[RMDB]
RNA sequence: GGGAACGACUCGAGUAGAGUCGAAAAGAUAGUGUCCUAAUUUUUGAACUCACGGAUAUAGUUCACUGCCGUAUGGCCGCCCCUAGUCAACGUAAGGCGGUUCUUUCUACGCUUGUCGGCAGGUACGCACACCGAAGUACUUCGGUACUUCGGUGUGAAAAGAAACAACAACAACAAC
Reactivity to 2A3 in 0.01 (KOAc 150mM, MgCl2 10mM, bicine 150mM(pH8.5), 24C), signal-to-noise 2, nucleotides 027 to 126: g050a060u300a010g090u060g040u050c000c020u040a150a230u010u180u030u060u200g040a020a000c000u000c030a070c040g090g000a010u040a000u030a200g000u000u030c040a040c080u000g020c020c020g090u170a140u100g030g000c000c000g010c060c000c000c030u090a020g090u150c060a170a090c090g100u070a030a040g000g000c080g010g020u050u000c030u000u020u000c000u030a020c150g110c240u030u170g060u150c000g010g000c000a000g010g020u020a020c070g010
Reactivity to DMS in 0.01 (KOAc 150mM, MgCl2 10mM, bicine 150mM(pH8.5), 24C), signal-to-noise 2, nucleotides 027 to 126: g010a130u010a140g010u010g010u000c010c020u040a060a100u000u000u000u000u000g000a100a030c050u000c100a120c230g020g020a150u000a070u000a030g020u000u000c050a090c010u000g010c000c000g040u010a100u000g020g000c000c030g000c040c000c060c090u000a170g000u000c180a070a090c070g000u020a070a300g000g020c020g000g040u000u050c050u000u000u000c100u000a070c140g000c120u020u010g000u010c010g020g020c010a020g000g040u000a040c160g010
The record gives the reactivity of an RNA of 177 nucleotides to 2A3 and DMS. The reactions ran in a buffer of 150 mM KOAc, 10 mM MgCl2 and 150 mM bicine (pH 8.5), at 24 C.